An RNA of 177 nucleotides, treated with 2A3 and DMS and read out base by base. Source: RMDB library OK1LIB, as collected in RNAgym. The 2A3 profile rests on 2,446 reads. Reactivities are rounded to 0.1 and cut off at 0 and 3.
RNA sequence: GGGAACGACUCGAGUAGAGUCGAAAAGGGAGAUCCGAGCAGAGGCAUAGCGAACUGCGCACGGCGAAGCCUUGAGGGAAGGCCGUAGGACCCGGGUUCGAUUCCCGGCCGCUCCACCGAAGGGCCACGUCGAUACUAGGUUCGCCUAGUAUCGACGAAAAGAAACAACAACAACAAC
Reactivity to 2A3 in 0.01 (KOAc 150mM, MgCl2 10mM, bicine 150mM(pH8.5), 24C), signal-to-noise 3, nucleotides 027 to 126: g070g030g020a080g000a060u040c040c020g020a010g020c070a000g010a050g060g000c030a070u170a060g080c050g060a080a040c020u050g030c030g030c060a030c040g040g010c060g020a040a010g000c010c000u040u030g040a100g000g030g000a060a100g040g000c020c020g060u060a120g000g040a070c020c000c000g000g010g010u050u070c040g000a060u110u090c010c000c000g000g000c010c020g050c020u030c010c010a040c000c020g050a050a060g020g010g020c010c000a040
Reactivity to DMS in 0.01 (KOAc 150mM, MgCl2 10mM, bicine 150mM(pH8.5), 24C), signal-to-noise 2, nucleotides 027 to 126: g010g000g010a090g000a020u000c030c000g000a170g000c020a080g000a080g020g000c040a110u040a070g000c050g000a090a100c010u020g000c050g010c100a040c000g000g000c020g000a160a240g000c000c010u000u000g000a210g010g010g000a170a060g000g010c000c090g000u020a180g000g010a030c210c000c000g000g000g010u000u020c140g000a300u070u050c000c000c000g000g000c090c050g000c050u030c040c030a150c020c040g010a070a060g000g000g050c000c050a140